[RMDB]
RNA sequence: GGGAACGACUCGAGUAGAGUCGAAAAUUUGAGUAAACACUACUCAGUAAGAAGGUCGAGUCGUAAACUACAAAUUUCAACAUCUUUGAUCAUUCUUAAUCACCAUAGCACCACUGAAUGUCUUGAAAGUUAUCGAAGUGGUAGGUUCGGCCCAACGCAUGCGCUGUCGGUUCGCCGACAGCGCAUGAAAAGAAACAACAACAACAAC
Reactivity to 2A3 in 0.01 (KOAc 150mM, MgCl2 10mM, bicine 150mM(pH8.5), 24C), signal-to-noise 2, nucleotides 027 to 156: u030u040u020g020a010g000u040a020a270a000c090a030c190u030a000c010u000c030a020g060u110a040a050g090a060a080g030g020u000c000g000a000g000u000c000g060u180a090a120a010c040u090a020c080a030a070a060u060u100u080c050a080a050c040a060u000c010u110u010u010g060a040u180c040a160u130u070c040u030u130a130a050u150c060a100c130c020a020u030a120g050c060a010c050c010a060c010u000g020a080a050u070g010u010c000u000u020g040a030a030a060g030u060u110a100u200c080g050a010a020g030u010g050g010u060a050g000g000u000u010c050g040g000c000c000c000a000a020c030g060